Chemical mapping of a 177-nucleotide RNA with DMS and 2A3.
The RNA was probed in 150 mM KOAc, 10 mM MgCl2 and 150 mM bicine (pH 8.5) at 24 C.
2A3 adducts were read by reverse transcription with SuperScript II with manganese.
RNA sequence: GGGAACGACUCGAGUAGAGUCGAAAAAAUGAACGUCUUCAUUGGACCGUACUUUAGUAUAAAAUUUUCGAAUAUAGCUUUUGCGACAGUAUUUGCGCUCUUAUUCGCAAAAGGUAUGGUUACAAAAGCGGUAAUACGGAUUCGUCCGUAUUACCGCAAAAGAAACAACAACAACAAC
Reactivity to DMS in 0.01 (KOAc 150mM, MgCl2 10mM, bicine 150mM(pH8.5), 24C), signal-to-noise 1, nucleotides 027 to 126: a150a090u000g000a080a030c240g030u030c000u000u010c070a190u000u000g000g020a080c010c000g000u000a010c000u010u000u080a150g060u010a090u100a080a050a040a100u000u000u000u060c070g000a000a100u010a010u020a020g000c180u030u020u000u040g000c050g000a080c250a020g080u000a070u030u000u000g020c040g000c040u010c160u000u000a070u010u000c040g010c300a000a000a000a000g000g000u000a050u000g000g000u000u000a090c050a020a000a000a000
Reactivity to 2A3 in 0.01 (KOAc 150mM, MgCl2 10mM, bicine 150mM(pH8.5), 24C), signal-to-noise 4, nucleotides 027 to 126: a000a000u180g060a090a040c050g030u010c000u130u070c050a180u030u040g010g010a010c000c010g000u010a000c010u060u080u120a130g130u110a140u120a200a150a180a220u060u150u020u060c010g010a020a010u060a010u040a090g060c140u110u130u210u160g010c030g160a170c100a040g160u210a300u160u230u160g010c000g020c000u020c000u090u030a030u050u000c010g000c050a000a050a000a000g000g000u010a000u030g020g000u000u070a170c010a010a080a000a000

For DMS the reverse transcriptase was MarathonRT. Values are in units of 0.01, from 0 to 300, in steps of 10.